Source: RMDB library RNAMAK, as collected in RNAgym. The record gives the reactivity of an RNA of 207 nucleotides to 2A3.
RNA sequence: GGGAACGACUCGAGUAGAGUCGAAAACCAGCCCGAGUUCGCUCGGGCUGGAAAAAACCGUAGGUCCGGCGUGGGAGACCCGACUUCGAAAGAGGUCGAAGGUCGACGAUCACGCGGACCUAAACGGAAAAAAGAUGCCCUCUUCGGAGGGCAUCAAGAAUAACGAUUAGUUCGCUAAUCGUUAUUCAAAAGAAACAACAACAACAAC
Reactivity to 2A3 in 0.01 (KOAc 150mM, MgCl2 10mM, bicine 150mM(pH8.5), 24C), signal-to-noise 1, nucleotides 027 to 156: c010c000a000g000c020c010c020g040a040g010u070u160c240g070c170u020c010g000g110g040c000u020g000g000a000a050a000a000a010a030c030c010g020u010a000g030g000u000c000c040g300g040c010g240u010g000g000g010a020g000a010c030c010c010g010a000c000u000u010c010g040a060a060a030g000a000g010g000u020c010g020a150a040g000g000u000c000g000a160c000g020a000u010c000a010c000g000c000g000g020a000c000c000u000a000a000a000c010g020g010a000a000a000a000a000a180g010a000u020g000c020c030c000u000c010u050u050c160g110g000a000g010g000g000c000a000u000c000a000a000